[RMDB]
RNA sequence: GGGAACGACUCGAGUAGAGUCGAAAAGACAGCGCCCAACGCUUCACAACCUGAAAUAAGCGCCUGUUAUCAGGACGGUUGAUCCAUUUACCGGUGCAGACCUCUGCAAACACCGGGUUGCAGAACAUAGAGGGAAAUUUGUUCGCAAAUUUCCCAACAAGAUAUGCAGGUUCGCCUGCAUAUCUUGAAAAGAAACAACAACAACAAC
Reactivity to 2A3 in 0.01 (KOAc 150mM, MgCl2 10mM, bicine 150mM(pH8.5), 24C), signal-to-noise 1, nucleotides 027 to 156: g050a010c040a030g010c010g040c020c000c000a100a040c000g000c030u040u030c090a010c050a160a100c010c020u020g070a050a040a000u080a120a020g020c050g070c160c000u030g010u180u140a160u300c060a020g010g000a000c010g010g040u010u060g040a060u000c030c000a020u090u170u180a070c000c000g030g000u030g020c010a030g060a180c030c010u110c040u090g000c000a060a090a040c060a010c080c050g020g080g020u000u140g000c040a010g020a050a020c060a040u140a070g070a230g020g000g020a000a000a010u000u000u000g020u040u040c120g000c110a000a000a000u030u000u000c050c000c000a000a020
Reactivity to DMS in 0.01 (KOAc 150mM, MgCl2 10mM, bicine 150mM(pH8.5), 24C), signal-to-noise 1, nucleotides 027 to 156: g000a130c050a060g000c060g030c050c060c080a070a150c080g000c000u000u000c090a140c070a070a090c060c050u010g000a110a040a280u000a110a050g030c030g030c010c050u000g050u010u000a060u020c050a030g020g030a100c010g010g010u030u000g040a110u000c010c010a130u010u010u000a080c020c000g040g030u000g000c000a050g000a090c050c060u000c100u000g010c030a180a030a080c000a030c000c030g000g000g030u000u000g010c010a050g000a130a120c050a150u010a160g000a230g030g020g000a010a060a010u000u000u010g000u000u000c300g030c030a020a010a030u000u010u000c000c010c000a000a090

Chemical mapping of a 207-nucleotide RNA with 2A3 and DMS. For DMS the reverse transcriptase was MarathonRT. For 2A3 the reverse transcriptase was SuperScript II with manganese. The DMS profile rests on 1,893 reads.